RNA sequence: GGGAACGACUCGAGUAGAGUCGAAAAAAAUGCUCUUCUAUGUCUUCAUCGUCAUCACAAAUUUCUUCAAACUUAAAUAUCUUAAGGACCUUCAACGGACUUGAUAAUAGAGAUUAACGAACUUUGUGAUGACAACGAAGAUACAGAGGAUCAAAAACAAUAAGGACUUCUUCGGAAGUCCUUAUUGAAAAGAAACAACAACAACAAC
Reactivity to 2A3 in 0.01 (KOAc 150mM, MgCl2 10mM, bicine 150mM(pH8.5), 24C), signal-to-noise 5, nucleotides 027 to 156: a000a010a030u040g010c020u010c000u020u000c000u000a030u060g010u000c000u000u010c010a050u110c070g010u000c000a000u000c000a000c000a000a000a020u020u020u010c000u050u070c030a040a100a090c010u060u060a060a110a040u020a070u020c020u090u140a060a120g150g070a300c010c000u150u110c190a080a040c140g000g000a000c010u010u020g010a010u010a040a020u050a040g050a010g020a080u080u050a050a020c080g000a010a000c010u000u010u000g000u000g000a000u000g000a000c000a000a000c000g000a000a000g000a000u000a000c000a000g010a000g000g010a000u030c010a010a090a030a000a020
Reactivity to DMS in 0.01 (KOAc 150mM, MgCl2 10mM, bicine 150mM(pH8.5), 24C), signal-to-noise 1, nucleotides 027 to 156: a050a080a050u000g000c050u000c000u010u000c010u010a060u000g030u020c000u000u000c010a020u000c030g030u000c010a060u000c000a020c000a030a050a000u000u000u010c000u000u000c030a040a050a190c020u000u010a040a170a280u000a020u010c020u000u000a020a010g010g000a150c040c030u010u000c300a090a100c220g010g030a300c030u000u010g020a030u000a040a020u000a300g000a080g000a140u000u000a030a090c130g000a020a030c180u000u010u000g020u000g010a060u000g010a110c000a000a010c000g000a030a000g000a030u000a040c000a000g010a080g000g010a050u000c030a040a120a110a100a150
An RNA of 207 nucleotides, treated with 2A3 and DMS and read out base by base. Values cover nucleotides 27 to 156. The reactions ran in a buffer of 150 mM KOAc, 10 mM MgCl2 and 150 mM bicine (pH 8.5), at 24 C. For DMS the reverse transcriptase was MarathonRT.